[RMDB]
RNA sequence: GGGAACGACUCGAGUAGAGUCGAAAAUCACUAUAUUCUGCAUGACAAUUUGCUUUGUCGCUUUUGCCACAUCAAUCGCAUCCACCAGCUUAGAUGGUUCAUCUGUCAUCAGAACCACAUCCGCAGCCUAGUGUGGUACAUUCGUGUACCACACUAGAAAAGAAACAACAACAACAAC
Reactivity to DMS in 0.01 (KOAc 150mM, MgCl2 10mM, bicine 150mM(pH8.5), 24C), signal-to-noise 4, nucleotides 027 to 126: u000c060a090c100u020a070u020a140u000u000c040u000g020c080a090u010g000a060c050a040a070u010u000u010g000c090u000u000u000g020u000c120g020c090u000u000u010u000g010c030c030a040c050a050u010c060a050a100u000c080g010c050a050u000c020c030a070c050c020a070g010c060u000u000a080g010a080u000g000g000u000u000c050a060u000c090u000g010u000c070a080u000c080a070g000a040a050c020c030a050c070a070u000c040c050g000c100a110g000c160
Reactivity to 2A3 in 0.01 (KOAc 150mM, MgCl2 10mM, bicine 150mM(pH8.5), 24C), signal-to-noise 5, nucleotides 027 to 126: u030c020a030c090u070a050u040a060u300u060c050u070g030c020a050u060g030a020c010a060a070u030u070u160g070c090u050u060u070g050u050c020g030c030u060u070u110u100g010c020c010a050c010a050u060c050a020a110u060c050g020c040a040u010c020c000a030c020c010a000g030c010u070u090a040g010a160u090g010g040u030u030c020a090u030c060u080g100u050c030a080u020c040a070g010a030a020c020c000a040c010a020u050c020c040g050c050a040g040c020